[RMDB]
RNA sequence: GGGAACGACUCGAGUAGAGUCGAAAAAACGCACACACGCAGCAAUGGCGUAAGACGUAAUGCGAAAUCAAGCAGUUAGCGGGCUGUGGAUUGCAGCUUGGCCGGCAAAUGGAAUCAGAUCUGGCGACAGAUCAGGGACUUUCGAGUCCCUGAUCUGAAAAGAAACAACAACAACAAC
Reactivity to DMS in 0.01 (KOAc 150mM, MgCl2 10mM, bicine 150mM(pH8.5), 24C), signal-to-noise 3, nucleotides 027 to 126: a060a030c040g000c030a020c020a030c220a010c040g010c050a160g060c020a270a110u060g010g010c030g000u000a030a080g040a120c010g010u000a050a130u010g000c020g040a160a030a030u030c060a080a090g080c090a110g030u000u000a090g010c050g000g000g000c030u020g010u000g000g000a130u040u020g010c030a020g020c060u010u010g010g010c050c000g000g000c050a020a060a090u000g020g000a050a110u010c150a010g000a080u000c000u000g010g000c050g040a210
Reactivity to 2A3 in 0.01 (KOAc 150mM, MgCl2 10mM, bicine 150mM(pH8.5), 24C), signal-to-noise 4, nucleotides 027 to 126: a000a000c050g040c000a050c010a010c010a000c020g030c000a020g000c030a030a300u210g250g000c010g020u020a000a010g050a010c000g020u070a080a000u060g000c020g020a030a000a060u110c070a100a000g030c010a010g040u100u190a030g020c010g020g010g000c020u030g030u060g120g100a130u090u280g000c030a020g000c010u020u040g050g020c000c030g000g000c000a030a030a080u120g030g040a040a020u060c030a030g030a020u020c010u020g030g020c030g020a020